[RMDB]
Annotation:
An RNA of 177 nucleotides, treated with DMS and read out base by base. It was measured as part of the RMDB library TTRINS.
RNA sequence: GGGAACGACUCGAGUAGAGUCGAAAAGAUAUGGAGAUCCCGGAUCGCUUGGAUUUAACCAUGCUAUGUGGAUCGGAAACGAUCCACUAAGGCAUGGUUUGUCAGCGAGAAGGGAUCUCCUAAGUCAGAGUAGUGAUACGUUCGCGUAUCACUACUCAAAAGAAACAACAACAACAAC
Reactivity to DMS in 0.01 (KOAc 150mM, MgCl2 10mM, bicine 150mM(pH8.5), 24C), signal-to-noise 2, nucleotides 027 to 126: g000a030u000a300u020g000g010a000g050a000u010c000c010c030g030g010a300u000c010g020c020u000u030g050g000a030u000u030u000a000a000c000c000a020u000g010c030u030a300u000g020u000g010g000a000u000c050g040g030a080a150a220c050g000a010u040c000c000a020c010u000a060a140g010g030c020a000u000g000g000u000u000u000g030u000c000a040g000c010g040a050g000a300a300g000g000g010a000u010c000u000c000c020u000a000a010g000u010c070a180

The RNA was probed in 150 mM KOAc, 10 mM MgCl2 and 150 mM bicine (pH 8.5) at 24 C.